[RMDB]
RNA sequence: GGGAACGACUCGAGUAGAGUCGAAAAGAUAUGGACAUCUAAGGCCAUCGAUCAAAGUCGUAGUCGGAAACGACUACGUCGUGGGAGGCUAUGAUGUCCUAAGUCAAAACCGUCCUUCGGGACGGAACUUCUGUAGUGCCUUCGGGCACUACAGAAGAAAAGAAACAACAACAACAAC
Reactivity to 2A3 in 0.01 (KOAc 150mM, MgCl2 10mM, bicine 150mM(pH8.5), 24C), signal-to-noise 1, nucleotides 027 to 126: g000a070u050a060u130g000g000a000c000a010u010c010u020a140a300g120g020c000c010a240u300c270g130a130u270c070a230a000a040g030u000c000g000u000a010g020u000c030g000g000a000a020a000c000g000a010c010u020a000c000g030u000c010g000u080g130g220g050a220g030g000c020u040a050u120g000a010u030g000u030c000c000u000a020a000g000u040c040a000a010a100a250c000c000g000u000c000c010u050u100c170g130g000g060a010c000g000g000a010a010

Source information:
The record gives the reactivity of an RNA of 177 nucleotides to 2A3. For 2A3, 1,266 sequencing reads were counted. 2A3 adducts were read by reverse transcription with SuperScript II with manganese.